The record gives the reactivity of an RNA of 177 nucleotides to DMS and 2A3. The reactions ran in a buffer of 150 mM KOAc, 10 mM MgCl2 and 150 mM bicine (pH 8.5), at 24 C. 2A3 adducts were read by reverse transcription with SuperScript II with manganese.
RNA sequence: GGGAACGACUCGAGUAGAGUCGAAAAGUGAUGGGGUAGAAUCACAGAGCUGAGGAGUCCACGGUAAAGAAUUCCAGGUCCCUGUGCUUCUCCUGCAUCCCAGCUCUUCUGUCAUUGGAAGGCAGUCAUCGUAACACUGAUUCGUCAGUGUUACGAUAAAAGAAACAACAACAACAAC
Reactivity to DMS in 0.01 (KOAc 150mM, MgCl2 10mM, bicine 150mM(pH8.5), 24C), signal-to-noise 6, nucleotides 027 to 126: g020u010g020a050u010g010g000g010g010u010a020g020a060a010u010c020a020c020a030g010a160g010c040u010g000a300g010g000a030g020u000c060c030a080c170g020g020u010a100a100a150g000a030a030u000u000c020c010a300g010g010u000c020c040c000u000g020u000g000c080u000u000c010u000c010c010u000g000c050a040u000c000c030c050a130g010c050u000c020u010u010c000u000g010u000c260a120u020u010g010g000a070a030g010g010c020a140g000u020c120
Reactivity to 2A3 in 0.01 (KOAc 150mM, MgCl2 10mM, bicine 150mM(pH8.5), 24C), signal-to-noise 4, nucleotides 027 to 126: g100u070g020a060u050g010g030g020g070u260a010g010a020a000u000c000a010c000a020g020a010g000c030u030g030a110g090g010a010g020u000c060c050a060c110g070g020u160a140a140a050g030a070a070u040u020c000c000a010g060g040u120c110c060c000u000g000u010g000c000u010u000c000u000c000c000u040g090c000a010u020c000c010c000a010g000c030u060c000u150u010c010u000g110u050c040a130u090u220g090g030a060a040g040g000c010a000g110u120c030